[RMDB]
RNA sequence: GGGAACGACUCGAGUAGAGUCGAAAAACAUAGGUUGGGCCAUAGGCGCUGCGGUUCAUCAUCUUGCCCUCGCCAGGACCGCUCCGGUUCUACUACUUGGCGUCGCGGAUACCGGGUUGGAAAACAAUGAAGGGUUACAGUUCGCUGUAACCCUUCAAAAAGAAACAACAACAACAAC
Reactivity to DMS in 0.01 (KOAc 150mM, MgCl2 10mM, bicine 150mM(pH8.5), 24C), signal-to-noise 1, nucleotides 027 to 126: a100c090a050u000a030g010g000u000u000g020g000g010c020c020a090u000a120g000g010c050g000c090u000g000c080g010g000u000u000c040a080u000c110a120u000c090u010u010g000c000c000c020u000c100g030c010c070a100g000g000a050c050c020g010c080u020c050c010g000g000u000u000c020u000a070c050u020a030c030u020u030g000g000c100g010u000c030g060c110g000g000a070u010a060c060c020g030g020g010u000u000g010g000a050a050a090a190c110a040a100